[RMDB]
RNA sequence: GGGAACGACUCGAGUAGAGUCGAAAACAACAAGCCUCUUGCAGAGGUGGGCAAUUUGAUUGUGGGCAAGGAAGACACACUGUUUGGGAGGCCCUCCGAUCCUGGAAAGGACAUCUCUCGUGACCUGCAACGUGUGUAGCUUCGGCUACACACGUUGAAAAGAAACAACAACAACAAC
Reactivity to DMS in 0.01 (KOAc 150mM, MgCl2 10mM, bicine 150mM(pH8.5), 24C), signal-to-noise 2, nucleotides 027 to 126: c090a100a110c100a110a150g010c020c000u000c010u000u010g010c120a120g000a110g000g000u000g000g000g010c130a060a110u000u000u010g010a070u000u000g020u000g000g000g020c050a110a110g010g000a090a030g000a070c090a080c140a050c090u000g010u000u000u000g000g020g000a110g030g030c050c020c060u000c020c030g000a150u000c030c040u000g000g040a080a080a030g010g000a110c120a060u000c030u000c030u000c000g000u000g000a090c080c020u010g020
Reactivity to 2A3 in 0.01 (KOAc 150mM, MgCl2 10mM, bicine 150mM(pH8.5), 24C), signal-to-noise 1, nucleotides 027 to 126: c050a000a010c000a040a070g020c000c040u030c010u080u280g020c080a050g000a070g110g040u110g000g050g020c040a040a090u040u040u230g070a070u000u160g020u080g050g040g060c030a040a050g100g050a110a060g060a000c000a000c010a010c040u000g090u190u040u140g100g000g000a040g020g040c010c010c000u080c010c000g030a070u030c000c010u040g050g030a120a050a020g020g010a000c020a100u040c020u000c000u010c020g010u000g110a070c050c010u090g000
Source information: Source: RMDB library OK2TRN, as collected in RNAgym. An RNA of 177 nucleotides, treated with DMS and 2A3 and read out base by base. The RNA was probed in 150 mM KOAc, 10 mM MgCl2 and 150 mM bicine (pH 8.5) at 24 C. For DMS, 1,013 sequencing reads were counted.